[RMDB]
RNA sequence: GGGAACGACUCGAGUAGAGUCGAAAAGGAGGCACUGCGUAACAUGAUAUGCAUGUAUGCCAUGAGCAUUGGCACCCUAGGUAGGGAGUUAGCCGACAGUGACGCAUUGUCGGAGCGUCGCCGUGGAACUACCUUCCCGCUUCGGUGGGAGGGUAGUAAAAGAAACAACAACAACAAC
Reactivity to DMS in 0.01 (KOAc 150mM, MgCl2 10mM, bicine 150mM(pH8.5), 24C), signal-to-noise 9, nucleotides 027 to 126: g010g000a170g010g010c020a050c040u010g000c030g020u010a050a110c160a090u060g000a160u020a050u020g010c010a020u020g010u010a050u010g010c010c020a080u020g000a130g010c060a060u010u010g000g000c010a090c010c010c000u000a100g020g010u030a060g000g000g010a100g010u000u000a070g010c010c010g000a080c050a060g010u010g010a070c060g010c030a060u020u010g010u010c070g000g000a090g000c020g000u000c010g010c010c030g010u010g000g010a130
Reactivity to 2A3 in 0.01 (KOAc 150mM, MgCl2 10mM, bicine 150mM(pH8.5), 24C), signal-to-noise 9, nucleotides 027 to 126: g120g020a050g010g010c020a010c070u040g000c020g040u060a090a040c030a100u130g070a140u130a050u230g060c010a010u110g030u060a050u080g010c010c020a040u140g030a040g030c060a060u040u110g010g000c010a060c000c000c000u030a080g080g180u150a020g020g040g000a070g040u070u100a030g030c000c010g010a010c010a000g010u020g050a070c040g020c130a050u050u110g070u110c050g040g020a040g010c020g020u030c020g000c010c010g020u070g040g030a030